Chemical mapping of a 177-nucleotide RNA with DMS and 2A3. It was measured as part of the RMDB library 15KREP. For 2A3, 1,431 sequencing reads were counted. The RNA was probed in 150 mM KOAc, 10 mM MgCl2 and 150 mM bicine (pH 8.5) at 24 C. For DMS the reverse transcriptase was MarathonRT.
[RMDB]
RNA sequence: GGGAACGACUCGAGUAGAGUCGAAAAAAUGGCUCGUGGGCCAUUUUUAAUGACCACCAUCUUAAUAGACCUGGUGUCUAUUGUGGCUCUGAUUUUAUUGACAUUGUCAGGCGGUUAGCAGUAUCACCAGUUAUCUAACGUUCGCGUUAGAUAACUGAAAAGAAACAACAACAACAAC
Reactivity to DMS in 0.01 (KOAc 150mM, MgCl2 10mM, bicine 150mM(pH8.5), 24C), signal-to-noise 3, nucleotides 027 to 126: a020a000u000g000g010c000u000c120g040u010g020g000g030c010c000a000u000u000u010u000u010a080a120u000g000a170c020c010a150c090c060a080u000c140u010u010a040a030u000a020g010a020c030c030u000g000g010u010g010u000c010u000a010u000u000g040u000g010g010c100u000c040u000g000a070u010u000u020u000a160u030u020g010a060c080a100u000u000g000u000c030a050g010g020c140g030g000u000u000a050g000c060a040g020u000a050u000c050a080c160
Reactivity to 2A3 in 0.01 (KOAc 150mM, MgCl2 10mM, bicine 150mM(pH8.5), 24C), signal-to-noise 2, nucleotides 027 to 126: a020a000u020g000g000c020u040c070g110u110g090g010g010c010c000a000u000u000u000u010u010a040a050u050g030a010c010c010a000c010c000a070u040c020u150u170a040a040u030a090g000a010c010c060u120g210g000u200g020u000c020u020a030u010u040g030u040g040g010c030u000c030u070g050a050u030u030u020u210a100u090u100g050a040c040a060u090u080g000u010c010a010g030g010c020g030g040u010u020a020g040c020a000g050u050a030u140c010a010c050